[RMDB]
RNA sequence: GGGAACGACUCGAGUAGAGUCGAAAAGAUAUGGAGCAAUAACGCUAAACUCGUUUGACGUCGGAAACGACCGAGAGUUAAGCGUUUCUGCUCCUAAGUCAAAGAUUAUAGCUUCGGCUAUAAUCAACAUUCAGUGUUGGUUCGCCAACACUGAAUGAAAAGAAACAACAACAACAAC
Reactivity to 2A3 in 0.01 (KOAc 150mM, MgCl2 10mM, bicine 150mM(pH8.5), 24C), signal-to-noise 2, nucleotides 027 to 126: g010a000u080a030u140g010g000a000g010c000a020a030u070a040a000c020g000c000u050a100a020a050c020u010c030g160u060u220u300g080a070c040g000u000c010g020g000a070a050a080c030g020a010c020c020g060a030g000a000g050u030u030a070a020g000c000g000u000u000u000c020u000g000c000u000c000c000u020a110a000g050u010c020a060a000a190g000a010u030u000a010u010a000g010c040u040u050c300g110g000c010u010a000u010a000a010u010c000a000a020
Reactivity to DMS in 0.01 (KOAc 150mM, MgCl2 10mM, bicine 150mM(pH8.5), 24C), signal-to-noise 4, nucleotides 027 to 126: g000a020u000a300u000g010g000a020g000c000a020a020u000a010a010c000g010c000u000a060a060a010c010u000c000g020u010u000u020g010a180c300g000u000c000g000g020a110a100a160c000g000a010c010c010g000a090g000a030g000u010u000a080a030g000c000g010u000u000u000c110u000g020c010u000c000c020u000a000a060g000u000c020a090a130a120g000a010u000u000a000u000a000g000c010u000u020c260g040g010c000u000a000u000a030a000u000c020a110a170
Overview: The record gives the reactivity of an RNA of 177 nucleotides to 2A3 and DMS. For DMS the reverse transcriptase was MarathonRT. For 2A3 the reverse transcriptase was SuperScript II with manganese. Values are in units of 0.01, from 0 to 300, in steps of 10.